[RMDB]
RNA sequence: GGGAACGACUCGAGUAGAGUCGAAAAAUGUUCGGCAAAGAAACAUUGUUUAUGCAAAGGCACUUCGCAAUGUGUGCUCAAACAUUGCUUAUUCAAACACGCUUCACAAUGUGCGACAAAGAAACAUAAAACGUUUAGUACUUCGGUACUAAACGAACACCAUGCUUGAGUUCGCUCAAGCAUGGUGAAAAGAAACAACAACAACAAC
Reactivity to 2A3 in 0.01 (KOAc 150mM, MgCl2 10mM, bicine 150mM(pH8.5), 24C), signal-to-noise 4, nucleotides 027 to 156: a030u040g030u010u010c010g060g030c110a100a090a060g080a080a130a010c000a010u010u030g050u050u170u100a120u170g050c090a080a110a060g130g000c020a020c020u040u010c030g000c020a000a010u020g000u000g010u030g030c070u070c120a070a080a010c000a010u000u010g000c000u050u100a120u060u130c050a090a070a000c070a020c150g000c010u040u010c030a000c000a030a000u040g010u040g040c030g020a030c050a010a120a010g120a030a060a000c030a020u120a070a100a020a030c010g000u000u010u000a000g000u030a000c000u000u040c210g040g000u000a000c000u000a000a000a000c000g000a010a000
Reactivity to DMS in 0.01 (KOAc 150mM, MgCl2 10mM, bicine 150mM(pH8.5), 24C), signal-to-noise 2, nucleotides 027 to 156: a050u000g000u000u010c030g020g000c100a140a160a120g000a150a050a030c020a110u010u000g000u000u010u000a060u020g020c000a170a180a170g000g020c030a020c010u000u000c130g010c100a060a120u000g000u000g010u000g000c050u000c060a030a100a020c030a050u000u000g010c120u000u010a060u000u020c130a000a080a090c100a040c070g030c070u000u040c160a080c130a090a090u010g030u000g060c020g020a120c020a100a090a180g040a070a150a060c010a140u000a040a060a050a240c000g010u010u020u000a010g010u020a000c000u020u010c300g100g030u000a000c010u000a000a010a000c000g000a010a120